About this RNA:
Chemical mapping of a 207-nucleotide RNA with 2A3. For 2A3, 436 sequencing reads were counted.
RNA sequence: GGGAACGACUCGAGUAGAGUCGAAAAUGAUCUUAUCUUGAGAUCCUGACCUUAAUUACGUCUGUGAAGACCCUUUUUCCAAAUAAAAUCACAAUGACAGGUUCCAGGUGUCAGGAUGGAGACACAGCUCAACCUGCUACAGUAGCUUCAGGGUCUGCACGAGGGCUUAUUUCGAUAAGCCCUCGUGAAAAGAAACAACAACAACAAC
Reactivity to 2A3 in 0.01 (KOAc 150mM, MgCl2 10mM, bicine 150mM(pH8.5), 24C), signal-to-noise 1, nucleotides 027 to 156: u100g010a010u030c030u000u050a030u100c020u110u220g030a000g000a070u120c040c000u040g040a070c000c000u150u240a220a140u110u070a080c050g040u000c020u050g030u000g040a060a010g000a030c020c030c000u010u100u020u070u030c070c060a030a170a090u080a090a130a020a050u150c050a010c070a150a090u190g100a030c000a040g090g000u090u090c030c080a070g010g020u080g080u000c000a000g020g050a030u030g100g070a010g000a000c050a000c020a010g000c020u060c070a000a080c010c000u030g000c000u100a100c050a190g020u140a050g100c060u030u050c040a000g000g000g000u000c040u020g030

Values cover nucleotides 27 to 156.